[RMDB]
Structure probing data (2A3 and DMS) for a 177-nucleotide construct. The reactions ran in a buffer of 150 mM KOAc, 10 mM MgCl2 and 150 mM bicine (pH 8.5), at 24 C. 2A3 adducts were read by reverse transcription with SuperScript II with manganese. The 2A3 profile rests on 1,131 reads. For DMS the reverse transcriptase was MarathonRT. The DMS profile rests on 928 reads. The data come from the RNA Mapping Database (RMDB), library OK2TRN.

RNA sequence: GGGAACGACUCGAGUAGAGUCGAAAAGUAAGCAAAGACGUAAUAACCGUCAUGGUGAGUAAACUGAGCGCAUGCCGUAAGAAAUGCAAACGCGUUAUGAUUCAGAACACCUGGUGCGCUAUUAUAACCGUACCCUAUCGUUCGCGAUAGGGUACGGAAAAGAAACAACAACAACAAC
Reactivity to 2A3 in 0.01 (KOAc 150mM, MgCl2 10mM, bicine 150mM(pH8.5), 24C), signal-to-noise 1, nucleotides 027 to 126: g060u100a050a020g090c030a120a060a080g090a030c090g040u000a080a080u030a040a020c040c000g020u000c000a030u070g000g030u020g020a060g010u090a050a110a050c000u010g010a010g050c000g000c020a000u020g000c020c030g000u010a110a020g060a110a250a050u150g000c030a000a220a000c060g000c010g000u000u010a070u040g020a050u000u060c020a000g010a090a000c010a000c000c000u000g030g000u100g000c020g010c020u000a030u080u030a040u030a060a020
Reactivity to DMS in 0.01 (KOAc 150mM, MgCl2 10mM, bicine 150mM(pH8.5), 24C), signal-to-noise 2, nucleotides 027 to 126: g010u010a130a070g020c070a040a100a060g000a050c110g020u000a030a030u000a060a090c290c040g000u000c020a040u000g030g010u000g020a060g000u010a080a060a170c040u020g000a010g020c050g010c040a040u000g020c040c070g000u000a070a140g020a090a200a050u000g000c190a030a070a070c140g020c030g020u000u030a120u000g010a180u000u000c050a000g020a090a080c020a040c010c020u000g000g020u000g010c110g020c010u010a010u000u000a000u000a120a100